[RMDB]
RNA sequence: GGGAACGACUCGAGUAGAGUCGAAAACGGGGAACUCGGCGAAUCGUCCCCAUCUAGCAGAGCCCCGGACCCCCUUCCAAAGAGACCGGAGGGGGUGACUAGGAACACCGGGGACAGGUCGGGUCCGGUGUUCAUCUAUCUUCGGAUAGAUGAACACAAAAGAAACAACAACAACAAC
Reactivity to 2A3 in 0.01 (KOAc 150mM, MgCl2 10mM, bicine 150mM(pH8.5), 24C), signal-to-noise 2, nucleotides 027 to 126: c010g000g000g000g040a040a070c010u000c010g030g000c030g050a120a200u120c070g030u020c040c000c010c000a030u050c040u020a040g090c060a050g040a080g250c050c020c000c010g000g020a040c020c000c000c000c010u070u020c030c020a090a160a060g180a040g050a070c110c090g000g000a010g020g020g020g000g010u000g010a020c010u010a030g070g080a110a060c060a050c130c120g010g020g020g000a000c000a010g050g020u000c000g000g000g010u020c020c010g040
Reactivity to DMS in 0.01 (KOAc 150mM, MgCl2 10mM, bicine 150mM(pH8.5), 24C), signal-to-noise 3, nucleotides 027 to 126: c070g000g030g000g020a230a040c000u000c010g020g010c030g000a140a130u000c130g010u020c000c000c020c020a050u020c040u000a040g020c080a140g000a130g000c030c010c000c050g000g000a100c050c000c010c000c010u000u000c010c040a080a140a170g000a170g020a110c270c190g010g000a030g010g000g000g020g010u000g000a050c050u000a040g010g000a100a060c160a150c120c060g010g010g050g000a030c020a050g020g010u000c020g020g000g000u010c020c000g010
Source information
An RNA of 177 nucleotides, treated with 2A3 and DMS and read out base by base. 2A3 adducts were read by reverse transcription with SuperScript II with manganese. In probing experiments dimethyl sulfate is read out at A N1 and C N3, which are open when not base-paired. Conditions: 150 mM KOAc, 10 mM MgCl2 and 150 mM bicine (pH 8.5), 24 C.